[RMDB]
RNA sequence: GGGAACGACUCGAGUAGAGUCGAAAACAUUCGACUUCGGUCGAAUGAGACCGUCGUUCGCGACGGUCACCUCAACUUCGGUUGAGGACCGACCGCUACGGCGGUCGGAGCACGUAUCUUCGGAUACGUGCAGAUCCACGUGAGUGGAUCAACUCACUCUACGGAGUGAGAGUUACUCGUGAGAGUAACAACGGAUGUCUUCGGACAUCCGAAGGGCGAUGAGGCCCGCCCAAACUGCCCUGAAAAGGGCUGAUGGCCUCUACUGUAGGCUAUCAUUCGUGAUAGCCAAAAGAAACAACAACAACAAC
Reactivity to 2A3 in 0.01 (KOAc 150mM, MgCl2 10mM, bicine 150mM(pH8.5), 24C), signal-to-noise 5, nucleotides 027 to 266: c000a000u000u000c010g000a000c010u040u050c260g110g010u000c000g010a000a000u010g000a010g010a000c010c000g000u000c000g020u060u090c250g010c020g130a000c000g000g000u000c000a030c000c000u000c000a000a010c010u050u080c260g130g000u000u000g000a000g000g000a010c010c000g000a000c000c010g020c010u040a040c300g150g000c000g000g000u000c010g000g000a020g000c000a000c000g000u000a010u010c010u030u050c220g130g000a000u000a000c000g000u000g000c000a010g000a000u000c010c000a000c020g100u120g130a060g010u000g000g000a000u000c000a000a000c000u000c010a010c000u010c000u020a050c290g140g000a000g000u000g000a010g010a010g000u000u000a010c000u000c000g040u080g120a090g000a000g030u000a000a000c010a020a040c010g000g000a000u000g010u010c010u050u110c190g120g000a000c000a000u000c000c000g000a070a030g000g000g000c000g020a040u100g000a040g010g000c000c000c000g020c010c000c010a090a110a040c050u040g000c000c000c010u010g030a050a040a050a050g000g010g030c020u010g020a020u010g000g010c000c000u000c000u000a010c000u010g030u040a040
Reactivity to DMS in 0.01 (KOAc 150mM, MgCl2 10mM, bicine 150mM(pH8.5), 24C), signal-to-noise 1, nucleotides 027 to 266: c000a050u000u000c000g000a010c000u000u030c120g020g000u000c010g000a000a000u000g000a150g020a010c000c010g020u000c010g020u010u030c180g030c020g000a050c030g000g010u010c010a020c000c000u010c000a000a010c000u000u020c130g030g000u000u000g020a010g010g010a110c010c000g040a040c020c010g010c010u000a130c150g040g050c010g000g030u000c000g000g000a190g050c000a010c010g020u000a010u000c000u000u010c200g020g010a010u000a000c000g010u010g010c020a040g000a020u000c000c010a010c000g000u010g000a240g010u000g000g000a000u000c000a130a150c040u030c010a000c000u000c000u000a150c190g010g000a000g000u000g000a000g000a070g000u000u000a000c000u000c000g020u030g000a160g000a010g010u000a010a000c000a190a300c030g000g000a010u010g000u000c000u000u040c230g000g010a010c010a000u010c000c000g020a070a110g000g000g020c010g020a070u020g020a020g010g020c040c010c040g070c010c000c020a060a100a180c080u000g000c000c000c030u010g000a110a060a130a000g000g000g010c010u010g010a120u040g010g000c010c000u000c000u000a030c060u010g000u000a190

Structure probing data (2A3 and DMS) for a 307-nucleotide construct.
For 2A3, 15,633 sequencing reads were counted.
Values are in units of 0.01, from 0 to 300, in steps of 10.
The reactions ran in a buffer of 150 mM KOAc, 10 mM MgCl2 and 150 mM bicine (pH 8.5), at 24 C.
Values cover nucleotides 27 to 266.